Source: RMDB library ARCHII, as collected in RNAgym. Structure probing data (2A3 and DMS) for a 207-nucleotide construct. The reactions ran in a buffer of 150 mM KOAc, 10 mM MgCl2 and 150 mM bicine (pH 8.5), at 24 C. For DMS the reverse transcriptase was MarathonRT.

RNA sequence: GGGAACGACUCGAGUAGAGUCGAAAAAACGAGGAUGGAUUGGACUCCCUUCCGCGGUGACACUCACAGAAGCCUUUGCAGCCUCGCAAGAGGUCUGGCGCGACAGUAAAGAAUGCCUGAUGCAAGUCAGUUCGCUGGCAACACUUUCGAAUUGCGGCAUCAUAACAACCUUCGGGUUGUUAUGAUGAAAAGAAACAACAACAACAAC
Reactivity to 2A3 in 0.01 (KOAc 150mM, MgCl2 10mM, bicine 150mM(pH8.5), 24C), signal-to-noise 3, nucleotides 027 to 156: a000a020c060g010a030g030g000a050u050g010g020a020u040u100g070g040a030c030u040c030c000c000u050u020c030c020g010c030g020g030u070g030a040c020a020c080u080c030a070c020a090g070a100a010g010c010c030u030u060u180g010c030a010g030c020c000u020c020g000c040a040a050g000a000g030g030u030c030u020g040g000c030g010c010g040a040c020a040g030u100a040a050a060g050a070a030u060g010c000c030u050g040a070u070g050c040a070a070g040u040c000a010g030u090u080c040g010c020u010g000g000c000a040a010c030a040c050u090u070u060c060g050a130a110u090u090g030c010g000g010
Reactivity to DMS in 0.01 (KOAc 150mM, MgCl2 10mM, bicine 150mM(pH8.5), 24C), signal-to-noise 1, nucleotides 027 to 156: a100a020c030g000a020g010g010a040u000g010g000a160u000u000g060g010a060c100u000c080c000c000u000u000c030c000g030c070g010g040u100g020a130c090a060c040u000c020a130c080a120g000a110a060g020c020c030u000u000u000g020c020a110g030c000c020u000c000g050c210a180a150g000a030g000g000u000c040u000g010g000c060g000c050g020a050c050a100g010u000a070a040a110g010a140a050u000g020c020c000u010g000a110u000g020c030a070a050g010u010c040a050g040u010u000c110g080c000u030g020g010c030a010a090c050a140c040u000u000u010c040g000a070a130u000u000g040c020g030g000